Chemical mapping of a 177-nucleotide RNA with 2A3 and DMS. The reactions ran in a buffer of 150 mM KOAc, 10 mM MgCl2 and 150 mM bicine (pH 8.5), at 24 C. It was measured as part of the RMDB library OK2TRN. For DMS, 644 sequencing reads were counted.

[RMDB]
RNA sequence: GGGAACGACUCGAGUAGAGUCGAAAACGAGACCACCCCGGUGAUGAUCCCGCCGAUCGGCAGCGGCAGGUUGAACAUGAUCCGCAAUGCGAUAGCUCCGCCGAUCACUUCGGCCACAUCGGUUGCCGCAUCCGUCAUUCUUCGGAAUGACGGAUGCAAAAGAAACAACAACAACAAC
Reactivity to 2A3 in 0.01 (KOAc 150mM, MgCl2 10mM, bicine 150mM(pH8.5), 24C), signal-to-noise 1, nucleotides 027 to 126: c060g000a010g030a010c010c040a040c010c040c040c030g090g000u040g020a300u010g000a050u160c050c020c030g000c070c100g030a030u080c010g040g000c010a020g020c000g000g000c010a000g020g010u060u150g060a070a060c060a130u160g020a060u150c000c000g090c050a060a100u090g040c010g180a170u050a150g010c020u070c070c070g000c000c000g000a000u040c000a050c100u100u110c000g000g070c000c010a060c010a010u090c030g070g060u130u120g030c000c050
Reactivity to DMS in 0.01 (KOAc 150mM, MgCl2 10mM, bicine 150mM(pH8.5), 24C), signal-to-noise 1, nucleotides 027 to 126: c050g000a140g030a190c060c060a120c070c130c080c010g000g040u000g010a060u040g000a180u000c110c020c020g000c300c060g000a060u010c060g000g010c000a050g010c090g040g050c140a060g000g020u000u000g010a040a150c100a040u000g020a010u010c030c150g000c030a170a040u020g000c040g000a130u030a100g000c050u000c140c130g000c000c060g000a110u000c030a020c140u000u000c010g010g020c080c040a040c040a090u000c030g010g020u000u000g000c080c030